[RMDB]
RNA sequence: GGGAACGACUCGAGUAGAGUCGAAAACCAACGUGGUUCGCCACGUUGGAAACAACAAAUACUGUCAGUAGAGACAGACACAAAAACUGUCAGUGUAGACAGAAAGGCGGUCCUUCGGGACCGCCAAGUUAACGGUAAGCUUCGGCUUACCGUUAACAAAAGAAACAACAACAACAAC
Reactivity to 2A3 in 0.01 (KOAc 150mM, MgCl2 10mM, bicine 150mM(pH8.5), 24C), signal-to-noise 1, nucleotides 027 to 126: c010c000a000a010c000g000u020g000g050u050u090c140g090c060c000a000c000g000u000u000g020g040a010a010a010c030a000a010c030a010a090a050u160a080c010u020g000u000c000a070g080u140a040g120a000g040a150c040a010g080a040c040a010c030a090a150a000a060a020c000u010g000u000c030a020g120u020g040u210a080g010a000c000a010g040a110a030a000g030g010c000g030g000u010c020c000u050u150c210g070g000g000a000c000c020g010c000c000a000a000
Reactivity to DMS in 0.01 (KOAc 150mM, MgCl2 10mM, bicine 150mM(pH8.5), 24C), signal-to-noise 1, nucleotides 027 to 126: c000c000a000a010c000g010u010g000g000u000u000c180g030c000c000a000c030g000u000u000g000g000a020a050a100c110a110a090c110a070a100a180u000a100c020u020g020u000c000a150g000u020a130g030a110g000a000c000a000g020a160c250a110c200a160a040a100a130a080c000u000g000u000c000a190g000u000g020u020a080g000a010c000a000g000a020a020a070g050g000c060g030g010u000c000c000u030u000c210g000g000g010a030c000c000g030c000c010a000a000